[RMDB]
RNA sequence: GGGAACGACUCGAGUAGAGUCGAAAAGAAAACAAGUACCGAGAACAUUGUUUUCGCUGCUUGGCGUUGCCGUUUUGUGUUGCAGUUGGUUGGGUAACGCCGCAAAUACCAACAGUAGAGAAAGAUAAUUAAAUUAAAUCUUCGGAUUUAAUUUAAUAAAAGAAACAACAACAACAAC
Reactivity to 2A3 in 0.01 (KOAc 150mM, MgCl2 10mM, bicine 150mM(pH8.5), 24C), signal-to-noise 2, nucleotides 027 to 126: g000a010a020a000a020c000a000a020g010u030a110c100c060g090a070g050a090a000c070a200u190u210g010u010u000u000u000c000g010c050u020g000c010u040u130g010g000c000g000u010u000g010c000c000g030u080u030u220u160g150u090g060u080u140g050c090a140g000u060u100g060g000u030u120g030g000g000u020a010a000c000g010c000c040g000c000a040a050a000u160a090c000c010a000a020c010a040g030u130a010g030a010g040a060a160a000g040a060u130a270
Reactivity to DMS in 0.01 (KOAc 150mM, MgCl2 10mM, bicine 150mM(pH8.5), 24C), signal-to-noise 4, nucleotides 027 to 126: g010a070a030a110a130c020a030a010g010u000a040c260c030g010a070g010a030a030c010a080u010u030g020u000u000u020u000c000g010c130u010g000c020u010u020g020g010c010g000u010u010g010c010c020g030u040u020u020u030g020u020g000u010u000g000c090a110g000u000u010g010g000u000u000g010g010g020u000a050a050c230g010c000c020g000c140a030a070a100u010a070c030c000a020a030c040a100g010u010a100g010a180g000a100a080a110g000a110u040a030